This 177-nucleotide RNA was probed chemically with 2A3 and DMS. 2A3 adducts were read by reverse transcription with SuperScript II with manganese. The RNA was probed in 150 mM KOAc, 10 mM MgCl2 and 150 mM bicine (pH 8.5) at 24 C.
[RMDB]
RNA sequence: GGGAACGACUCGAGUAGAGUCGAAAAGUGUCCUAACUUGAUUCUUAGAGCAGGCUGUCCCAAGUCAGGGUGGAGGGGGCGGCAUCACUGAGCUCUCGGCGCCAUGGUGGCAGUAUGAGCUAUGGCGUUAAGUGCAAGCGUUCGCGCUUGCACUUAAAAAAGAAACAACAACAACAAC
Reactivity to 2A3 in 0.01 (KOAc 150mM, MgCl2 10mM, bicine 150mM(pH8.5), 24C), signal-to-noise 1, nucleotides 027 to 126: g110u080g110u040c040c000u010a100a040c010u100u120g090a060u120u080c030u090u090a000g000a020g050c070a020g060g020c000u060g040u090c000c000c000a050a020g120u000c050a020g090g120g020u160g090g070a130g000g020g000g000g020c000g010g010c000a010u090c000a060c100u130g000a030g000c000u000c000u010c060g010g000c030g000c000c000a000u000g040g080u030g110g000c040a090g090u200a300u220g040a000g000c000u000a000u000g000g020c000g000
Reactivity to DMS in 0.01 (KOAc 150mM, MgCl2 10mM, bicine 150mM(pH8.5), 24C), signal-to-noise 2, nucleotides 027 to 126: g010u030g000u000c000c010u000a120a140c180u000u000g000a030u000u000c020u000u010a050g020a000g000c000a180g000g000c000u000g020u000c010c000c000a040a170g000u040c030a080g000g020g000u000g030g000a170g000g000g000g050g000c020g000g000c030a000u000c060a130c300u010g010a120g000c040u000c000u000c200g010g020c000g020c010c000a000u000g000g010u000g000g000c090a150g010u040a030u020g050a300g010c000u000a000u000g000g000c060g000
For 2A3, 498 sequencing reads were counted. For DMS the reverse transcriptase was MarathonRT.